[RMDB]
RNA sequence: GGGAACGACUCGAGUAGAGUCGAAAAAAAAGAUAUGGACGCUGAACUACUUCGAAACACAGGCGAAGAACGCUUUCGGAAACGAAAGCGGGAGCCUGUGGAACCGAAGCAGCGUCCUAAGUCAAAAGAUUAAAGUUUGGUUCGCCAAACUUUAAUCAAAAGAAACAACAACAACAAC
Reactivity to DMS in 0.01 (KOAc 150mM, MgCl2 10mM, bicine 150mM(pH8.5), 24C), signal-to-noise 1, nucleotides 027 to 126: a060a000a050a060g020a020u000a300u020g010g000a020c010g000c000u000g000a110a060c050u050a300c010u000u000c000g020a050a130a130c010a000c000a020g000g000c000g000a070a150g000a110a180c020g050c000u000u000u000c000g020g000a050a100a220c010g000a010a000a000g020c000g000g060g000a050g050c000c000u020g000u010g000g000a050a090c300c020g000a000a000g020c000a000g030c010g020u000c000c000u010a060a020g000u000c020a140a080a120a110
An RNA of 177 nucleotides, treated with DMS and read out base by base. DMS adducts were read by reverse transcription with MarathonRT. It was measured as part of the RMDB library TTRDES. The reactions ran in a buffer of 150 mM KOAc, 10 mM MgCl2 and 150 mM bicine (pH 8.5), at 24 C.